[RMDB]
RNA sequence: GGGAACGACUCGAGUAGAGUCGAAAAAAGCAAUUUCUCUCCUUACAAGCUGGUCCCAGCCCUGUGCUGCCCCGAUAAGAGGAGCGAGACAGAAACCGCUUUAGUAACGGCAGGACGCGUGCAACGGCUCACAAUACGGAUUCGUCCGUAUUGUGAGAAAAGAAACAACAACAACAAC
Reactivity to DMS in 0.01 (KOAc 150mM, MgCl2 10mM, bicine 150mM(pH8.5), 24C), signal-to-noise 4, nucleotides 027 to 126: a080a030g030c080a070a100u000u010u010c030u000c040u010c020c010u000u010a080c100a110a140g020c040u000g020g000u000c040c050c000a180g010c060c030c080u010g010u000g010c020u010g010c030c000c010c020g020a100u010a100a090g010a070g010g010a050g030c090g010a070g000a070c110a090g000a060a100a090c040c030g020c020u000u000u000a090g010u000a060a060c060g000g020c040a060g000g030a040c050g010c060g010u010g000c070a050a050c080g000g020
Reactivity to 2A3 in 0.01 (KOAc 150mM, MgCl2 10mM, bicine 150mM(pH8.5), 24C), signal-to-noise 2, nucleotides 027 to 126: a000a000g090c030a050a040u000u060u020c040u000c010u000c030c000u040u140a080c050a100a040g030c030u020g030g020u020c010c020c010a000g000c010c020c030u130g040u110g020c010u020g000c020c000c000c000g060a110u060a130a080g060a050g050g000a010g010c020g030a050g010a030c050a080g140a050a010a010c020c020g050c050u060u050u100a060g040u060a060a020c020g020g000c020a020g000g030a010c020g040c030g050u070g030c020a050a040c040g100g030
The record gives the reactivity of an RNA of 177 nucleotides to DMS and 2A3. The DMS profile rests on 3,524 reads. For 2A3 the reverse transcriptase was SuperScript II with manganese. It was measured as part of the RMDB library OK2TRN.